An RNA of 177 nucleotides, treated with 2A3 and DMS and read out base by base.
The 2A3 profile rests on 5,139 reads.
DMS adducts were read by reverse transcription with MarathonRT.
The data come from the RNA Mapping Database (RMDB), library TTRDEL.
Conditions: 150 mM KOAc, 10 mM MgCl2 and 150 mM bicine (pH 8.5), 24 C.
RNA sequence: GGGAACGACUCGAGUAGAGUCGAAAAGAUAUGGACCAUACGAUCGAAGAACAUACAGUCCCUCGGAAACGAGAACCUGUAUGGGAGAUCAGUAUGGUCCUAAGUCAAAGGGGCCUUCGGGCCCCAAGAUAUUACCCAUCUUCGGAUGGGUAAUAUCAAAAGAAACAACAACAACAAC
Reactivity to 2A3 in 0.01 (KOAc 150mM, MgCl2 10mM, bicine 150mM(pH8.5), 24C), signal-to-noise 2, nucleotides 027 to 126: g040a000u080a020u110g010g000a000c000c000a000u000a030c000g010a010u020c020g160a280a040g030a110a040c000a000u000a000c010a010g080u220c070c050c020u010c000g010g010a080a040a050c000g000a000g000a060a100c010c020u010g000u010a010u010g020g010g020a070g000a010u020c160a050g020u000a000u000g000g000u000c000c000u000a000a000g000u000c000a040a040a040g030g000g000g000c000c010u060u070c180g090g080g010c030c040c010c000a000a000
Reactivity to DMS in 0.01 (KOAc 150mM, MgCl2 10mM, bicine 150mM(pH8.5), 24C), signal-to-noise 3, nucleotides 027 to 126: g000a040u010a300u000g000g010a020c000c000a010u000a000c000g000a020u000c000g010a120a180g000a130a200c020a000u000a000c000a010g000u010c160c170c020u010c000g000g010a140a060a140c000g000a010g010a060a080c290c020u000g000u000a010u000g000g000g000a070g020a010u000c000a050g000u000a000u000g010g000u000c000c000u000a000a070g010u000c020a050a130a160g010g010g020g020c010c000u010u020c180g010g030g000c000c000c000c000a000a020